Chemical mapping of a 177-nucleotide RNA with 2A3 and DMS. 2A3 adducts were read by reverse transcription with SuperScript II with manganese. The RNA was probed in 150 mM KOAc, 10 mM MgCl2 and 150 mM bicine (pH 8.5) at 24 C. The data come from the RNA Mapping Database (RMDB), library TTRINS.
[RMDB]
RNA sequence: GGGAACGACUCGAGUAGAGUCGAAAAGAUAUGGAUACUCGAACUACUCUCCGAGCCAAGCGAUGAAAAAAUAUAUUCGGAAACGAAUAUAUUUUGGAGCUUGGCGGAGAGCGAGUAUCCUAAGUCAGCAAUAGUGUAUGUUCGCAUACACUAUUGCAAAAGAAACAACAACAACAAC
Reactivity to 2A3 in 0.01 (KOAc 150mM, MgCl2 10mM, bicine 150mM(pH8.5), 24C), signal-to-noise 1, nucleotides 027 to 126: g010a030u100a050u060g000g000a000u000a000c000u020c060g030a110a090c090u210a100c010u300c020u000c000c000g120a110g270c010c010a010a000g000c010g300a300u280g130a230a030a000a020a040a020u000a000u000a000u000u000c000g010g030a000a060a000c020g000a010a010u030a010u020a010u000u000u000u030g000g020a110g000c010u000u010g000g000c000g000g000a000g040a000g000c010g010a000g010u020a000u000c010c000u010a000a000g030u010c040a070
Reactivity to DMS in 0.01 (KOAc 150mM, MgCl2 10mM, bicine 150mM(pH8.5), 24C), signal-to-noise 1, nucleotides 027 to 126: g000a030u000a300u010g000g000a020u000a000c000u000c000g010a030a080c080u010a300c000u000c000u000c000c010g010a240g020c010c000a000a000g040c020g010a210u020g030a000a030a040a010a040a010u000a000u000a000u000u000c000g000g000a090a050a120c000g000a030a000u000a000u000a020u000u000u000u000g040g010a200g010c000u010u000g000g020c010g000g000a000g000a000g000c020g000a000g020u010a000u000c000c000u000a000a070g000u000c000a130